Structure probing data (DMS and 2A3) for a 177-nucleotide construct.

RNA sequence: GGGAACGACUCGAGUAGAGUCGAAAAGCCUGUACCGAGUCCUUGGAACUGAAGUGGUAACACCAGGUUUAAGCGUAGGACAGGGAGCAACAGAGCCGAAACGAAAGUGAAGCGAUUGAGCUGGGAACUAUAUUGCGAGCUUCGGCUCGCAAUAUAGAAAAGAAACAACAACAACAAC
Reactivity to DMS in 0.01 (KOAc 150mM, MgCl2 10mM, bicine 150mM(pH8.5), 24C), signal-to-noise 2, nucleotides 027 to 126: g000c000c060u010g040u030a160c030c020g000a180g040u000c060c000u010u000g000g000a110a000c010u000g000a100a300g010u000g000g010u050a120a120c010a060c000c000a300g000g000u000u000u000a050a160g100c080g000u000a010g000g040a000c010a170g000g000g000a080g010c130a080a090c110a000g010a200g030c060c050g000a160a030a000c040g050a040a100a120g000u000g000a280a020g000c000g000a120u040u010g000a170g000c010u000g000g060g020a060a200
Reactivity to 2A3 in 0.01 (KOAc 150mM, MgCl2 10mM, bicine 150mM(pH8.5), 24C), signal-to-noise 2, nucleotides 027 to 126: g080c000c010u030g000u020a190c010c000g000a000g020u080c000c000u020u020g020g040a010a000c010u030g020a120a020g020u040g000g000u060a060a050c000a010c010c000a010g010g060u000u000u040a050a020g080c130g030u020a000g000g000a000c000a000g000g030g000a020g010c000a010a120c000a060g070a000g050c050c010g070a130a020a030c080g120a080a110a000g020u080g060a020a010g050c000g100a080u060u200g070a080g000c010u060g000g030g060a090a000
The reactions ran in a buffer of 150 mM KOAc, 10 mM MgCl2 and 150 mM bicine (pH 8.5), at 24 C.